About this RNA:
Chemical mapping of a 177-nucleotide RNA with 2A3 and DMS. For 2A3 the reverse transcriptase was SuperScript II with manganese. For 2A3, 1,805 sequencing reads were counted. The data come from the RNA Mapping Database (RMDB), library M2PK90. The RNA was probed in 150 mM KOAc, 10 mM MgCl2 and 150 mM bicine (pH 8.5) at 24 C. DMS adducts were read by reverse transcription with MarathonRT. The DMS profile rests on 1,969 reads.
[RMDB]
RNA sequence: GGGAACGACUCGAGUAGAGUCGAAAAAUAAAUAAACGGCACCUAUAAGGUGGUGCCGAACAAGCGUGACCUACCUACACGCAACAAGCAGACAGGUAAGACUGCAAAGGAAAGGAAAACAAAAAAAGUGUAUUCUAUAGUUCGCUAUAGAAUACACAAAAGAAACAACAACAACAAC
Reactivity to 2A3 in 0.01 (KOAc 150mM, MgCl2 10mM, bicine 150mM(pH8.5), 24C), signal-to-noise 2, nucleotides 027 to 126: a020u070a010a040a060u180a080a070a010c020g000g000c010a000c010c020u110a100u040a300a110g150g020u160g000g010u010g030c000c000g000a020a000c050a070a000g000c000g000u000g000a080c000c030u010a060c020c010u030a000c000a000c000g020c000a010a040c020a040a000g000c010a000g070a160c010a040g180g140u140a100a040g040a060c020u030g000c030a070a010a070g100g000a120a090a050g050g010a120a080a070a090c070a030a080a030a020a000a010a000
Reactivity to DMS in 0.01 (KOAc 150mM, MgCl2 10mM, bicine 150mM(pH8.5), 24C), signal-to-noise 2, nucleotides 027 to 126: a050u000a040a060a080u000a030a080a140c010g000g000c000a010c000c000u020a230u000a090a140g000g020u010g000g030u010g020c010c010g000a090a080c130a090a070g000c020g020u000g010a070c070c040u000a100c040c030u000a130c040a010c040g000c020a100a100c120a120a160g000c070a020g020a130c110a100g010g010u000a070a040g020a120c030u000g010c030a040a110a060g010g000a030a060a060g020g000a090a070a080a050c080a020a030a110a040a080a040a110